[RMDB]
RNA sequence: GGGAACGACUCGAGUAGAGUCGAAAAGGGGGUUGAGGCCCUGUCCGCCGCUGCGCUGCCACCUACUCUUCGCGCCGCUAGUCGAGCGGACUCCAGGUGGAGAUUCCCUAUUCUCUCACGCUCUUUUCUUUUUGCGCAGCGGCGAGUGGGUUCCCAGGUAUAGACUAUACUUCGGUAUAGUCUAUACAAAAGAAACAACAACAACAAC
Reactivity to DMS in 0.01 (KOAc 150mM, MgCl2 10mM, bicine 150mM(pH8.5), 24C), signal-to-noise 1, nucleotides 027 to 156: g010g030g000g040g100u000u020g020a110g050g030c130c010c010u010g000u000c050c060g040c020c020g000c010u000g010c000g010c020u010g010c020c010a020c010c010u010a060c050u000c030u000u000c010g050c040g020c050c000g030c070u010a140g040u000c090g020a150g010c000g030g010a040c030u000c080c040a060g000g010u000g000g020a140g020a190u010u020c040c010c040u010a150u000u000c080u000c040u000c040a070c060g000c030u000c010u010u000u000u000c060u000u010u000u000u000g030c010g020c010a070g060c030g020g000c010g000a010g010u000g000g000g010u000u000c000c000c020a150g030
Reactivity to 2A3 in 0.01 (KOAc 150mM, MgCl2 10mM, bicine 150mM(pH8.5), 24C), signal-to-noise 4, nucleotides 027 to 156: g050g010g020g010g000u070u130g040a030g040g040c000c000c020u020g130u040c030c000g000c000c000g000c010u000g000c000g000c010u040g030c010c010a020c010c000u070a110c050u110c110u240u220c120g080c060g030c150c000g020c010u040a050g170u280c100g090a010g000c000g000g000a010c000u040c040c060a010g010g010u030g000g030a070g020a120u020u060c020c010c000u020a130u160u090c070u000c010u020c010a040c060g070c020u010c030u020u110u130u090c030u090u250u040u210u150g000c010g000c010a000g000c010g000g000c010g000a000g000u060g000g010g010u020u030c020c000c000a020g040